Structure probing data (2A3 and DMS) for a 177-nucleotide construct. Conditions: 150 mM KOAc, 10 mM MgCl2 and 150 mM bicine (pH 8.5), 24 C.
RNA sequence: GGGAACGACUCGAGUAGAGUCGAAAACGACAUGGCUUCGGCCAUGUCGAAAGGACGAGUGAGACCGAAACGGAGGUAGGUCCAUCUACCUUCUCACUCAAAAAAUCCGUUUGUUCGCAAACGGAAACUAAAUAGAGCACUUCGGUGCUCUAUUUAGAAAAGAAACAACAACAACAAC
Reactivity to 2A3 in 0.01 (KOAc 150mM, MgCl2 10mM, bicine 150mM(pH8.5), 24C), signal-to-noise 2, nucleotides 027 to 126: c000g000a000c000a000u000g000g030c000u070u020c240g080g000c000c000a010u010g000u000c000g000a010a000a000g030g030a030c120g020a010g010u010g000a020g020a040c090c050g110a200a140a020c150g100g030a020g030g000u000a000g000g030u070c020c030a090u050c010u000a000c000c000u090u020c000u000c010a000c000u000c000a000a030a050a020a070a000u010c000c000g000u000u010u010g030u050u070c210g000c190a000a010a000c000g000g000a030a000a000
Reactivity to DMS in 0.01 (KOAc 150mM, MgCl2 10mM, bicine 150mM(pH8.5), 24C), signal-to-noise 4, nucleotides 027 to 126: c020g010a000c000a000u000g000g020c010u000u010c180g020g000c000c010a000u010g000u000c000g000a020a040a110g000g010a120c190g000a030g020u000g010a040g000a210c200c040g000a070a070a130c220g000g020a040g000g020u000a010g010g010u010c150c120a100u010c000u000a000c000c000u000u010c000u000c000a000c010u010c010a000a010a080a070a090a080u000c000c000g010u000u010u000g010u000u020c240g010c010a010a020a010c010g000g000a020a010a110
For 2A3 the reverse transcriptase was SuperScript II with manganese. The DMS profile rests on 3,180 reads. DMS adducts were read by reverse transcription with MarathonRT.